Source: RMDB library OK1LIB, as collected in RNAgym. This 177-nucleotide RNA was probed chemically with DMS and 2A3. Conditions: 150 mM KOAc, 10 mM MgCl2 and 150 mM bicine (pH 8.5), 24 C. For 2A3, 1,074 sequencing reads were counted.
[RMDB]
RNA sequence: GGGAACGACUCGAGUAGAGUCGAAAAGAGCGUCAGCUGGUCAGGUAGCGGUGGGUUGAGCAAAACAUGUUCAAGAAAGUUCAGCAAAACAUGUGCUUUUGGUCUGCGCCUCUGAAUAUACGAGCGAUCUGGUGUUGUUCUUCGGAACAACACCAGAAAAAGAAACAACAACAACAAC
Reactivity to DMS in 0.01 (KOAc 150mM, MgCl2 10mM, bicine 150mM(pH8.5), 24C), signal-to-noise 2, nucleotides 027 to 126: g000a090g010c130g030u000c050a110g000c010u000g020g030u020c020a020g000g000u020a100g000c090g000g000u010g040g000g000u020u050g000a070g040c040a040a050a150a110c170a020u020g010u000u050c100a010a180g000a060a090a110g010u000u020c070a040g000c120a050a040a020a040c090a070u000g000u000g000c030u000u000u000u000g000g000u010c010u000g000c010g010c060c000u000c000u020g000a080a030u020a040u000a150c130g000a210g000c030g010a050
Reactivity to 2A3 in 0.01 (KOAc 150mM, MgCl2 10mM, bicine 150mM(pH8.5), 24C), signal-to-noise 2, nucleotides 027 to 126: g060a010g000c020g010u040c050a000g030c000u030g000g020u050c030a020g040g060u090a020g040c010g020g050u030g000g020g010u020u060g040a040g020c040a000a050a000a060c010a080u090g030u050u060c080a070a050g070a100a100a010g160u150u150c040a030g000c040a020a030a000a050c060a030u130g030u030g070c000u060u110u060u050g030g000u010c010u090g020c000g000c020c010u010c010u020g050a130a040u190a060u070a070c070g030a040g040c040g020a050